Chemical mapping of a 177-nucleotide RNA with DMS and 2A3. The 2A3 profile rests on 22,570 reads. Reactivities are given for positions 27 through 126. The RNA was probed in 150 mM KOAc, 10 mM MgCl2 and 150 mM bicine (pH 8.5) at 24 C.
[RMDB]
RNA sequence: GGGAACGACUCGAGUAGAGUCGAAAAGCUGGAAUGGACGCGCACGACGUUGUCGUCGUCGACUUCGUAGUUGCGGAUCCGACGCAGCAGCGCGCCCAGGGCCACCCGGGCUUCCAUCCGGGCCAGGGCCUGAUAUCAAUUUCGAUUGAUAUCAGGCAAAAGAAACAACAACAACAAC
Reactivity to DMS in 0.01 (KOAc 150mM, MgCl2 10mM, bicine 150mM(pH8.5), 24C), signal-to-noise 8, nucleotides 027 to 126: g010c030u000g000g000a170a100u010g020g000a010c010g000c010g020c020a110c160g000a060c110g010u000u000g010u010c010g010u010c180g000u010c080g010a030c080u000u000c010g020u000a120g010u010u010g020c020g000g000a050u000c050c040g000a070c090g000c030a050g010c040a190g000c040g000c060g000c010c000c000a070g010g010g000c060c080a220c010c000c000g000g010g010c120u000u010c120c100a120u010c010c000g000g010g000c080c050a090g010g000
Reactivity to 2A3 in 0.01 (KOAc 150mM, MgCl2 10mM, bicine 150mM(pH8.5), 24C), signal-to-noise 8, nucleotides 027 to 126: g050c030u030g030g040a120a070u060g020g010a020c010g020c000g010c060a020c110g240a030c100g050u030u050g070u170c030g020u040c040g080u090c040g020a030c050u030u020c010g040u030a130g170u110u270g050c000g010g030a050u020c020c010g010a010c020g000c010a020g000c010a020g000c020g000c010g000c020c010c000a020g010g030g000c010c010a020c010c000c000g010g000g000c000u110u040c020c010a040u000c000c010g010g010g020c010c030a050g010g060
The data come from the RNA Mapping Database (RMDB), library OK2TST.